Structure probing data (2A3 and DMS) for a 177-nucleotide construct.
It was measured as part of the RMDB library OK2TST.
DMS adducts were read by reverse transcription with MarathonRT.
For DMS, 6,606 sequencing reads were counted.
The RNA was probed in 150 mM KOAc, 10 mM MgCl2 and 150 mM bicine (pH 8.5) at 24 C.
RNA sequence: GGGAACGACUCGAGUAGAGUCGAAAACUUGAUACGGGGCUCGAUACGGGUUCGGGGGGCCGUUGAUCGGCAGCGGAAGCUGCCUGCCCAUUCGGCUUUUCCGCCGGCGCGGACUGCGAGGCAGGCAUCACCUAAUGAGUUUCGACUCAUUAGGUGAAAAAGAAACAACAACAACAAC
Reactivity to 2A3 in 0.01 (KOAc 150mM, MgCl2 10mM, bicine 150mM(pH8.5), 24C), signal-to-noise 2, nucleotides 027 to 126: c020u070u130g030a050u120a250c060g000g030g030g000c040u060c050g030a040u070a200c040g040g070g020u100u190c030g030g000g000g000g020g000c000c000g000u010u030g050a060u130c020g020g010c000a030g000c020g040g030a050a010g020c060u040g010c000c000u010g000c030c010c010a050u050u070c020g000g000c000u090u020u070u040c020c020g000c000c020g060g000c060g000c010g050g030a070c020u070g000c040g030a050g000g040c010a000g010g010c000a050
Reactivity to DMS in 0.01 (KOAc 150mM, MgCl2 10mM, bicine 150mM(pH8.5), 24C), signal-to-noise 4, nucleotides 027 to 126: c070u010u000g010a150u000a090c100g020g010g000g010c050u000c070g000a120u000a070c130g000g000g010u010u000c060g000g000g000g000g000g000c010c010g000u010u010g000a100u000c090g000g000c030a070g010c060g030g010a090a130g010c120u000g000c010c000u000g000c030c010c080a180u010u010c050g000g010c010u000u000u000u010c050c040g020c020c030g020g020c180g010c020g010g010a060c100u000g010c020g010a110g000g020c030a030g000g000c040a120